[RMDB]
RNA sequence: GGGAACGACUCGAGUAGAGUCGAAAAUGACCAGCCCGACGAAGACGAACUGGCUGCUGCGUACCGCGAGGCAUCUGAGAGUGCGGAAGAGCUUGCAGAAGAGUGGGACGACGAAUCGGACGAGGCGACUUUUAAAAUCAUUCGUGAUUUUAAAAGUAAAAGAAACAACAACAACAAC
Reactivity to DMS in 0.01 (KOAc 150mM, MgCl2 10mM, bicine 150mM(pH8.5), 24C), signal-to-noise 9, nucleotides 027 to 126: u010g010a160c030c010a190g010c020c010c010g020a070c080g010a140a100g000a090c050g010a110a150c050u000g000g000c030u000g010c030u000g010c030g010u000a110c070c040g000c050g010a200g010g010c050a050u010c070u010g000a130g000a080g030u010g010c030g000g010a080a100g010a140g010c060u000u000g010c030a040g000a050a060g010a120g020u000g010g000g000a160c060g010a070c040g000a130a070u000c040g000g010a060c030g010a120g010g010c070g010
Reactivity to 2A3 in 0.01 (KOAc 150mM, MgCl2 10mM, bicine 150mM(pH8.5), 24C), signal-to-noise 7, nucleotides 027 to 126: u130g070a040c010c010a010g020c000c020c010g020a030c030g030a060a020g070a030c030g020a070a050c020u030g090g000c010u020g020c010u020g000c020g040u060a090c010c010g000c030g030a070g070g040c030a060u030c060u060g050a070g010a020g160u140g020c020g020g010a050a010g030a020g030c070u110u120g000c020a020g020a130a020g070a040g080u120g010g020g010a020c020g000a020c010g020a020a050u040c020g000g040a030c030g030a070g030g000c030g020

Structure probing data (DMS and 2A3) for a 177-nucleotide construct. For DMS the reverse transcriptase was MarathonRT.